[RMDB]
Conditions: 150 mM KOAc, 10 mM MgCl2 and 150 mM bicine (pH 8.5), 24 C. This 207-nucleotide RNA was probed chemically with DMS and 2A3. It was measured as part of the RMDB library OK3TST. Values cover nucleotides 27 to 156. The DMS profile rests on 5,197 reads.

RNA sequence: GGGAACGACUCGAGUAGAGUCGAAAAUCUUGAGUAUCAAAGCUCAUGUGGUUGAGCAGAUUAUUGAAUUAUUAAGCAUGAGUAGUGACAGAAGGCUGGAAUGCAUACACUUUGGUCCUGUUUUCUUCGGAUCAUCAAAAAUUAAACAUGCACGUGAUAGUAAAAUAAUCUUCGGAUUAUUUUACUAAAAAGAAACAACAACAACAAC
Reactivity to DMS in 0.01 (KOAc 150mM, MgCl2 10mM, bicine 150mM(pH8.5), 24C), signal-to-noise 2, nucleotides 027 to 156: u010c020u010u010g000a080g040u010a130u010c100a100a130a260g010c000u000c000a040u000g030u000g040g020u000u000g010a060g040c020a130g030a100u000u000a090u000u010g000a070a090u000u010a030u010u000a030a050g030c010a040u000g010a150g020u000a060g040u000g020a110c030a070g010a060a030g000g020c010u000g000g000a030a030u010g010c020a070u000a040c100a060c050u000u000u000g030g000u000c010c000u000g030u010u010u000u000c020u000u010c010g000g030a050u010c020a110u020c040a050a060a070a060a140u010u000a060a090a100c090a070u010g020c020a090c080g010u000g020a190
Reactivity to 2A3 in 0.01 (KOAc 150mM, MgCl2 10mM, bicine 150mM(pH8.5), 24C), signal-to-noise 3, nucleotides 027 to 156: u030c020u020u070g030a020g020u090a040u210c100a060a100a020g010c010u000c000a010u090g100u150g080g110u100u070g020a040g000c040a030g020a100u040u140a040u150u240g020a090a020u030u030a040u020u030a030a000g000c000a010u010g030a010g010u030a020g010u020g070a020c040a060g050a020a000g000g000c000u000g000g020a030a020u030g000c030a010u080a130c060a010c030u050u010u020g000g000u000c010c000u030g010u040u180u070u030c000u040u030c010g020g020a010u000c000a020u040c010a010a030a070a030a000u090u180a060a090a030c080a100u140g040c090a020c130g020u100g040a090